[RMDB]
RNA sequence: GGGAACGACUCGAGUAGAGUCGAAAAGUCUCCUAGAGAGCUUGGCCGUCGGGCCUUACACCCCGACUUGCUGAGUUUCUCUAGGAGAGUCCCUUUCCCAGCCACAGGUGGCUGGUCAAACAAUACCAAAACUCUUGCUAGUUCGCUAGCAAGAGAAGUUAUUCAUUGGGUUCGCCCAAUGAAUAACAAAAGAAACAACAACAACAAC
Reactivity to 2A3 in 0.01 (KOAc 150mM, MgCl2 10mM, bicine 150mM(pH8.5), 24C), signal-to-noise 2, nucleotides 027 to 156: g020u010c000u000c000c000u010a000g000a000g000a010g000c000u010u000g000g000c000c000g000u000c000g000g020g000c000c000u060u070a070c060a040c010c000c000c000g000a010c020u070u290g010c000u020g010a020g010u010u300u020c000u000c000u000a000g000g000a000g000a000g000u000c000c000c000u010u040u000c000c000c010a000g030c000c000a110c060a170g120g130u050g020g000c000u030g080g000u070c040a030a040a020c060a030a080u130a120c030c020a020a030a160a130c010u000c000u000u000g000c000u000a000g000u070u050c190g030c090u000a010g040c000a000a000g000a000g000a000a010